[RMDB]
RNA sequence: GGGAACGACUCGAGUAGAGUCGAAAACCCCAAUGAUGAAACCUUCACAUGUCCGACCAGCUGCCUGUUGCCAGAGCCUGAAAAGGUGAACCCACUGGCUCAACAGCUGGAGAGGAAGGAUGACUUGUUGCAAAGGGGGAUUCGUCCCCCUUUGCAAAAAAGAAACAACAACAACAAC
Reactivity to 2A3 in 0.01 (KOAc 150mM, MgCl2 10mM, bicine 150mM(pH8.5), 24C), signal-to-noise 1, nucleotides 027 to 126: c020c020c000c000a140a140u220g050a020u100g080a210a080a100c000c000u050u060c180a140c090a140u180g130u160c000c050g000a000c010c060a000g000c000u000g030c000c120u070g010u180u010g000c000c000a000g000a000g060c000c000u000g010a000a000a030a030g070g000u100g020a000a040c000c000c000a040c000u000g000g000c000u000c000a000a060c010a040g000c000u000g000g040a000g000a000g040g000a000a070g020g000a000u020g030a050c080u020u010g000
Reactivity to DMS in 0.01 (KOAc 150mM, MgCl2 10mM, bicine 150mM(pH8.5), 24C), signal-to-noise 1, nucleotides 027 to 126: c070c000c000c080a090a020u120g000a030u000g020a210a090a030c000c020u000u000c000a100c100a050u030g030u060c060c070g070a300c010c000a000g040c000u000g000c120c080u000g000u000u020g050c000c010a000g000a190g000c000c030u000g000a080a040a160a030g000g000u000g000a070a170c060c030c090a240c000u000g000g110c000u000c010a050a160c000a000g010c010u000g010g020a030g000a260g000g010a030a010g000g000a080u000g000a280c130u000u000g000

Chemical mapping of a 177-nucleotide RNA with 2A3 and DMS. For 2A3, 463 sequencing reads were counted. The data come from the RNA Mapping Database (RMDB), library RFM100.